[RMDB]
RNA sequence: GGGAACGACUCGAGUAGAGUCGAAAAUGGGGAAGUGAAAUCUGAAUCGAAACCGCCGGCCAAAUAUCAUAUUAUCGACCAUGAAUAUGAUUGUGUGGUGGUAGGCGCUGGCGGUGCAGGUUUAAGAACUCAUAUCACUCUUCGGAGUGAUAUGAGUAAAAGAAACAACAACAACAAC
Reactivity to DMS in 0.01 (KOAc 150mM, MgCl2 10mM, bicine 150mM(pH8.5), 24C), signal-to-noise 5, nucleotides 027 to 126: u000g010g020g000g010a160a090g030u010g010a040a090a100u000c030u000g010a050a060u000c040g010a090a300a030c020c010g020c010c000g010g010c000c050a060a110a080u010a010u000c010a000u000a020u000u010a030u000c050g010a080c160c100a050u010g000a060a060u000a020u000g000a020u000u000g000u010g020u000g020g010u010g000g000u000a030g000g010c130g020c020u000g010g010c000g010g020u000g010c120a260g010g010u000u000u000a050a070g010a090
Reactivity to 2A3 in 0.01 (KOAc 150mM, MgCl2 10mM, bicine 150mM(pH8.5), 24C), signal-to-noise 2, nucleotides 027 to 126: u100g050g000g020g000a000a060g110u110g140a070a050a110u070c020u030g030a010a020u050c020g030a100a020a010c000c010g000c020c000g000g020c010c010a080a150a000u080a020u050c010a000u030a020u080u050a040u040c010g090a080c100c030a080u170g080a110a040u250a050u140g030a040u030u040g010u020g010u030g060g110u070g030g010u040a070g040g000c060g000c120u050g010g000c000g000g000u000g000c010a020g000g000u010u010u010a020a020g010a020
This 177-nucleotide RNA was probed chemically with DMS and 2A3. 2A3 adducts were read by reverse transcription with SuperScript II with manganese. The RNA was probed in 150 mM KOAc, 10 mM MgCl2 and 150 mM bicine (pH 8.5) at 24 C. Source: RMDB library OK2TST, as collected in RNAgym.